[RMDB]
RNA sequence: GGGAACGACUCGAGUAGAGUCGAAAAUACAUGCUAUAUGAUUCUAAUUCUAUGACAUUCUGGAAGAGGCACCACUAUGGCAUCAGGAACAAGGCAGUGUUUCCCAGGGGUUCUGAUGGAGGGAGUUAUGAACAGGUGAAGAACAGGAUUUUUAGGGCGGAGAACCAUAAUUCGUUAUGGUUCUCCGAAAAGAAACAACAACAACAAC
Reactivity to DMS in 0.01 (KOAc 150mM, MgCl2 10mM, bicine 150mM(pH8.5), 24C), signal-to-noise 1, nucleotides 027 to 156: u000a060c070a040u000g000c040u010a200u000a030u000g000a100u000u010c080u000a090a200u010u000c070u010a060u010g030a090c050a130u000u030c050u030g010g000a120a060g020a090g000g000c040a120c020c020a060c040u040a030u000g030g030c020a080u000c010a120g000g040a070a050c030a050a110g040g000c050a060g020u000g030u000u010u000c000c010c020a060g010g010g000g030u000u000c050u000g010a120u010g000g000a010g010g020g010a060g000u000u010a060u020g010a060a050c020a030g010g000u000g000a030a090g000a080a110c060a090g060g000a230u010u010u000u000u020a080g000g000g000
Reactivity to 2A3 in 0.01 (KOAc 150mM, MgCl2 10mM, bicine 150mM(pH8.5), 24C), signal-to-noise 3, nucleotides 027 to 156: u110a010c030a040u070g030c030u060a040u050a100u300g070a120u110u080c070u100a120a110u060u090c030u090a090u120g030a030c020a100u110u050c030u090g050g020a060a070g020a070g060g000c020a040c020c030a030c010u060a040u090g010g000c000a030u010c070a100g040g020a030a020c020a030a100g060g030c010a020g040u040g020u050u070u000c010c010c000a000g020g020g000g000u060u060c000u080g050a070u090g020g000a010g020g050g000a040g010u070u090a100u120g030a040a010c000a060g050g010u050g060a030a010g000a030a010c010a040g020g040a000u050u070u070u120u230a080g010g120g080